Chemical mapping of a 177-nucleotide RNA with 2A3 and DMS. The reactions ran in a buffer of 150 mM KOAc, 10 mM MgCl2 and 150 mM bicine (pH 8.5), at 24 C.
RNA sequence: GGGAACGACUCGAGUAGAGUCGAAAAACUUUCUUUAUCUAAACGUCGAAUUUGGCUGGCACAUGUUGCACCGCCAGCGACUGCUCCGACUACGACUAUUUUGGGCAUCGUAACUUACCUCCUAUUGCCAGACAGAUGCAUUCGUGCAUCUGUCUGGAAAAGAAACAACAACAACAAC
Reactivity to 2A3 in 0.01 (KOAc 150mM, MgCl2 10mM, bicine 150mM(pH8.5), 24C), signal-to-noise 5, nucleotides 027 to 126: a000c040u090u140u000c030u080u090u100a170u090c100u130a040a080a090c050g020u020c020g090a200a200u110u060u120g090g000c040u030g010g030c010a060c070a140u190g070u160u070g100c100a110c100c030g000c000c000a000g000c000g000a010c010u030g030c000u000c030c020g030a030c000u020a030c050g100a060c020u060a110u110u050u100u100g000g040g000c010a010u070c050g030u010a000a060c020u040u130a070c000c010u040c000c020u060a080u140u160g070
Reactivity to DMS in 0.01 (KOAc 150mM, MgCl2 10mM, bicine 150mM(pH8.5), 24C), signal-to-noise 1, nucleotides 027 to 126: a020c060u000u040u010c080u000u000u010a030u030c110u010a080a040a130c100g000u000c050g010a080a020u030u000u020g000g010c000u000g000g000c050a070c290a140u000g010u000u000g020c110a170c220c130g000c000c000a000g010c000g000a000c020u030g000c030u020c040c000g040a100c010u000a020c050g000a080c040u020a080u020u000u040u030g000g060g000c070a010u000c070g000u000a010a050c020u000u000a060c050c000u000c040c000u050a080u000u000g000